The record gives the reactivity of an RNA of 207 nucleotides to DMS and 2A3. High 2A3 reactivity points to a flexible backbone, as in loops and unpaired stretches.
[RMDB]
RNA sequence: GGGAACGACUCGAGUAGAGUCGAAAAUGAAGCAAAUCCAUAAUUGCCAAUGAUGAGCAAUUCGCUAUUGCCGCCUAAAAACGGUUAGCCGGGGCUGCUAGAGCCUUGUUAUCAAAGAUAGCCGGCGUUACGGCAUGAUGGUUCGCCAUCAUGCCAAGCAUGUUUAAUGGUUCGCCAUUAAACAUGCAAAAGAAACAACAACAACAAC
Reactivity to DMS in 0.01 (KOAc 150mM, MgCl2 10mM, bicine 150mM(pH8.5), 24C), signal-to-noise 3, nucleotides 027 to 156: u030g020a100a110g040c060a070a080a210u010c030c030a100u010a050a060u010u000g000c000c010a090a180u000g010a180u000g000a130g000c010a030a040u000u000c000g040c020u000a070u000u000g020c000c010g040c030c040u000a060a060a110a090a050c020g000g000u000u010a030g020c010c060g010g040g020g030c040u000g020c050u010a090g010a090g020c010c020u000u010g030u000u010a070u000c080a060a070a110g010a090u000a040g020c020c150g030g010c060g000u000u000a060c110g020g000c000a020u010g000a010u000g000g000u000u010c300g010c040c000a020u000c000a010u000g010c030c000a000a110
Reactivity to 2A3 in 0.01 (KOAc 150mM, MgCl2 10mM, bicine 150mM(pH8.5), 24C), signal-to-noise 7, nucleotides 027 to 156: u130g020a060a020g030c030a040a040a090u070c030c020a040u090a140a030u080u020g010c010c010a110a100u280g110a140u070g010a110g030c010a010a020u090u070c040g000c030u050a060u070u180g010c000c010g010c020c020u060a050a040a030a000a000c010g010g010u050u040a020g010c010c000g010g000g030g010c010u040g010c050u080a050g030a010g180c010c010u020u060g030u050u060a080u080c060a130a050a030g020a030u030a020g010c000c020g020g020c020g040u110u170a040c070g000g000c000a000u000g000a000u000g010g030u040u080c160g020c060c000a000u000c000a000u000g000c000c000a000a000
2A3 adducts were read by reverse transcription with SuperScript II with manganese. DMS adducts were read by reverse transcription with MarathonRT.